Annotation:
The record gives the reactivity of an RNA of 177 nucleotides to DMS. The RNA was probed in 150 mM KOAc, 10 mM MgCl2 and 150 mM bicine (pH 8.5) at 24 C. The DMS profile rests on 649 reads. For DMS the reverse transcriptase was MarathonRT.
RNA sequence: GGGAACGACUCGAGUAGAGUCGAAAAGUAUACACUGUAAGUUUCAAAGUCUGAGUAUAGAAGAAACUGAAUUUUUGUUUACAUUUUGGAGAACUAUUCUGAUUUGGGCAAUUCUGUGCACUCAAUAAUUAAUAUAACUCUUCGGAGUUAUAUUAAUAAAAGAAACAACAACAACAAC
Reactivity to DMS in 0.01 (KOAc 150mM, MgCl2 10mM, bicine 150mM(pH8.5), 24C), signal-to-noise 1, nucleotides 027 to 126: g000u000a050u010a110c020a070c080u000g030u000a130a020g010u000u000u010c020a120a270a230g010u010c020u000g010a200g010u000a110u010a110g020a170a150g000a060a020a020c020u000g010a070a040u010u000u010u010u000g000u000u000u000a060c040a070u000u000u000u000g010g010a090g010a040a140c130u000a050u020u000c020u010g000a000u000u000u000g030g000g000c070a030a060u000u000c060u010g020u000g000c100a040c030u000c030a030a070u000a050